[RMDB]
RNA sequence: GGGAACGACUCGAGUAGAGUCGAAAAGCUUGCUUCGGCAAGCAAAAAGAUAUGGACGUGUAGGUAGUCGUCUCGGAAACGAGAACGAGCCUAGACGUCCUAAGUCAAAAACGUCCUUCGGGACGAACUUAUACAAGUAGUUCGCUACUUGUAUAAGAAAAGAAACAACAACAACAAC
Reactivity to 2A3 in 0.01 (KOAc 150mM, MgCl2 10mM, bicine 150mM(pH8.5), 24C), signal-to-noise 8, nucleotides 027 to 126: g000c000u000u010g000c010u050u120c280g160g000c010a000a000g000c010a050a040a020a000a020g040a020u070a010u080g000g000a000c000g010u140g120u050a010g040g010u040a080g290u050c000g000u000c000u000c000g030g020a110a080a040c020g000a010g010a050a030c010g000a000g000c010c000u010a020g050a010c000g000u000c000c000u000a000a000g000u000c010a000a000a020a100a120c010g010u000c000c000u040u090c250g100g000g000a000c010g010a030a020
Reactivity to DMS in 0.01 (KOAc 150mM, MgCl2 10mM, bicine 150mM(pH8.5), 24C), signal-to-noise 8, nucleotides 027 to 126: g010c010u000u000g010c000u000u010c200g040g020c000a000a000g010c010a010a030a060a110a060g000a030u000a300u000g010g000a010c000g020u000g000u000a000g000g010u000a060g010u000c000g010u000c000u000c000g010g000a080a090a200c000g000a010g000a040a010c010g000a050g010c000c000u000a010g000a010c010g000u000c000c000u000a010a050g000u010c050a080a070a060a100a160c030g000u000c000c000u000u020c180g030g010g010a010c000g000a020a050

Record summary: Structure probing data (2A3 and DMS) for a 177-nucleotide construct. The RNA was probed in 150 mM KOAc, 10 mM MgCl2 and 150 mM bicine (pH 8.5) at 24 C. The data come from the RNA Mapping Database (RMDB), library TTRDEL. The DMS profile rests on 17,661 reads. For DMS the reverse transcriptase was MarathonRT. As a SHAPE reagent, 2A3 marks flexible, mostly unpaired nucleotides at the ribose 2'-OH.